An RNA of 177 nucleotides, treated with DMS and 2A3 and read out base by base. 2A3 adducts were read by reverse transcription with SuperScript II with manganese. Source: RMDB library OK1LIB, as collected in RNAgym. The DMS profile rests on 2,211 reads. Conditions: 150 mM KOAc, 10 mM MgCl2 and 150 mM bicine (pH 8.5), 24 C. For DMS the reverse transcriptase was MarathonRT.
RNA sequence: GGGAACGACUCGAGUAGAGUCGAAAAGUUCCACCGGACAGCGGCGGCAAGAUAGCUGUCGCAAUUCCGAGCAUGUUCGGGAUACGCACGUCUUUAAAGACCUGUCCGUCGAUUACGGACUUGCAAGGGAUAAUCCGUAGUUCGCUACGGAUUAUCCAAAAGAAACAACAACAACAAC
Reactivity to DMS in 0.01 (KOAc 150mM, MgCl2 10mM, bicine 150mM(pH8.5), 24C), signal-to-noise 2, nucleotides 027 to 126: g000u000u000c000c000a150c090c020g020g050a030c300a100g000c000g040g000c000g000g000c000a280a170g040a100u010a220g000c000u000g000u020c010g020c010a000a000u000u010c020c150g030a140g000c080a010u000g000u000u000c080g020g000g050a130u020a040c090g000c000a030c300g000u000c000u020u020u060a080a040a040g000a090c030c040u000g000u000c250c060g010u070c090g010a180u000u060a030c010g010g030a000c000u000u000g000c060a200a030g010
Reactivity to 2A3 in 0.01 (KOAc 150mM, MgCl2 10mM, bicine 150mM(pH8.5), 24C), signal-to-noise 4, nucleotides 027 to 126: g010u020u000c000c020a050c080c000g020g000a030c010a040g020c010g010g000c010g000g000c030a090a000g140a300u220a110g030c000u000g000u010c000g000c000a000a010u150u000c000c000g020a010g000c040a020u120g010u030u010c010g030g000g070a020u000a070c020g000c020a020c040g000u000c000u060u200u140a160a250a010g020a020c010c020u030g070u050c060c070g030u060c030g010a000u040u150a050c000g000g010a000c000u010u020g010c050a080a070g080